[RMDB]
RNA sequence: GGGAACGACUCGAGUAGAGUCGAAAAACUAGGAGCGCACAUCUCUCUAAGACUGUACGACAGUCUGUCUCUCUAGCACGCUUGUUCAACGAGAGAGAGAGAGCGUUGGAACAAGUGUCCAACGAAACAUCUGGUAGCGUUUCGACGCUACCAGAUGAAAAGAAACAACAACAACAAC
Reactivity to 2A3 in 0.01 (KOAc 150mM, MgCl2 10mM, bicine 150mM(pH8.5), 24C), signal-to-noise 2, nucleotides 027 to 126: a000c070u080a080g020g020a030g060c070g050c040a000c030a170u000c010u000c000u000c010u020a040a030g000a000c000u000g050u180a140c160g210a070c200a010g000u010c000u000g030u040c000u010c000u000c000u010a030g010c050a020c070g210c190u160u230g030u150u070c010a050a040c080g000a010g000a000g000a010g000a000g010a000g010a000g050c020g000u000u010g020g000a050a020c060a300a070g070u100g020u300c010c000a020a010c010g030a060a050a050
Reactivity to DMS in 0.01 (KOAc 150mM, MgCl2 10mM, bicine 150mM(pH8.5), 24C), signal-to-noise 2, nucleotides 027 to 126: a090c070u010a070g020g010a080g000c070g030c060a060c180a140u000c010u000c000u000c010u000a130a030g010a010c000u010g010u010a090c300g010a200c030a010g000u010c000u000g000u000c000u000c000u010c000u010a300g020c090a030c030g010c150u040u000g010u000u010c000a040a090c270g020a050g000a030g010a060g020a050g000a030g010a040g000c010g020u000u000g000g000a020a020c050a040a050g000u010g000u000c010c000a040a020c010g030a070a100a070